Source information
This 177-nucleotide RNA was probed chemically with DMS and 2A3. It was measured as part of the RMDB library OK1LIB. The reactions ran in a buffer of 150 mM KOAc, 10 mM MgCl2 and 150 mM bicine (pH 8.5), at 24 C. 2A3 adducts were read by reverse transcription with SuperScript II with manganese.
RNA sequence: GGGAACGACUCGAGUAGAGUCGAAAAAUGGACCGCAAUGACCCACUGCAAGUGCAUCGCGACGCCUUUAAUAUUCCAAAGCGGCGCGACGGUUCCGAUCACGUUUACCUCUGUGGGCAAACACUUGCACGACUAAUGACUUCGGUCAUUAGUCGUGAAAAGAAACAACAACAACAAC
Reactivity to DMS in 0.01 (KOAc 150mM, MgCl2 10mM, bicine 150mM(pH8.5), 24C), signal-to-noise 2, nucleotides 027 to 126: a030u000g010g000a060c010c000g010c180a100a030u000g000a110c070c010c030a060c000u000g000c130a040a250g020u010g000c160a180u000c000g010c040g030a010c020g000c020c110u040u020u010a050a030u040a060u020u030c210c120a000a200a100g010c010g000g000c000g000c050g030a040c040g030g020u000u040c000c050g010a130u010c090a040c090g000u010u000u000a160c060c010u000c030u010g020u050g000g000g000c090a050a070a030c010a000c030u000u010g000
Reactivity to 2A3 in 0.01 (KOAc 150mM, MgCl2 10mM, bicine 150mM(pH8.5), 24C), signal-to-noise 4, nucleotides 027 to 126: a030u080g020g000a020c030c030g030c040a030a030u270g040a040c010c020c000a020c040u070g010c070a120a050g060u000g070c020a040u010c010g020c000g010a010c010g030c000c010u060u100u070a300a200u290a200u190u140c080c100a060a010a000g010c000g000g000c000g000c000g000a000c030g010g000u040u080c020c020g000a050u060c040a040c130g040u030u090u180a090c000c000u050c030u060g000u040g010g020g000c030a020a050a000c060a020c020u030u040g000